Structure probing data (2A3) for a 207-nucleotide construct. For 2A3, 450 sequencing reads were counted. Conditions: 150 mM KOAc, 10 mM MgCl2 and 150 mM bicine (pH 8.5), 24 C. It was measured as part of the RMDB library M2RFPK.
[RMDB]
RNA sequence: GGGAACGACUCGAGUAGAGUCGAAAAAGCACUGGUACGAUACGUCGUACCAGUGCAGUCGUUGGGAUGGAACGCAAUUAAAUACAUGUGUGACGUGUAUUUGCGAACGACGUAAUUAUUUUUCAUAAUCACGCUAUCGUGUUCGCACGAUAGCGAACGAUAACUGCGGGUUCGCCCGCAGUUAUCGAAAAGAAACAACAACAACAAC
Reactivity to 2A3 in 0.01 (KOAc 150mM, MgCl2 10mM, bicine 150mM(pH8.5), 24C), signal-to-noise 1, nucleotides 027 to 156: a000g010c000a000c000u020g000g000u000a000c010g000a000u030a090c300g080u030c000g000u000a000c000c000a000g010u000g000c000a000g000u000c000g040u000u060g240g000g000a200u130g060g140a050a060c030g000c000a020a020u180u110a220a150a000u000a000c000a080u030g040u000g130u140g300a050c060g010u000g000u000a000u000u010u030g000c030g000a000a050c000g020a000c020g010u100a110a050u220u070a050u080u150u080u000u000c080a030u080a130a190u210c040a000c110g050c000u000a010u000c000g000u040g000u020u010c120g040c030a000c000g060a000u000a000g000c000g000a030a000